RNA sequence: GGGAACGACUCGAGUAGAGUCGAAAAGGGAUCAUCGAGAACUUCCAGUCGCUCAAGGAGACCCUGGAGGAGCGAGGAUAUCGGUUCGUAUCCGAGACCGAUUCCGAGGUGCUCGCCCACCUCAUCGAGUGUAGAUUCUGUUCGCAGAAUCUACACUAAAAGAAACAACAACAACAAC
Reactivity to DMS in 0.01 (KOAc 150mM, MgCl2 10mM, bicine 150mM(pH8.5), 24C), signal-to-noise 4, nucleotides 027 to 126: g000g000g010a300u000c060a100u020c030g000a090g020a080a110c050u010u030c070c080a120g020u000c090g010c030u000c020a100a110g030g000a070g000a070c030c020c010u000g010g030a140g000g000a030g010c010g040a210g020g000a020u000a020u010c000g000g000u010u000c040g010u010a160u020c220c040g020a110g000a040c040c010g010a020u000u000c010c020g000a100g020g010u010g000c010u000c060g000c020c050c020a140c050c050u000c050a120u000c190g000
Reactivity to 2A3 in 0.01 (KOAc 150mM, MgCl2 10mM, bicine 150mM(pH8.5), 24C), signal-to-noise 4, nucleotides 027 to 126: g010g000g020a040u070c060a010u110c090g020a000g010a070a040c020u130u050c090c010a040g160u180c060g020c090u010c040a090a110g140g020a120g050a230c020c000c000u030g000g030a040g010g010a010g030c050g010a020g000g010a040u070a030u150c010g000g050u050u020c050g040u190a190u110c140c020g030a060g050a040c000c000g010a010u040u000c010c010g000a020g020g040u090g020c020u060c010g070c000c000c000a020c020c010u100c040a150u170c100g070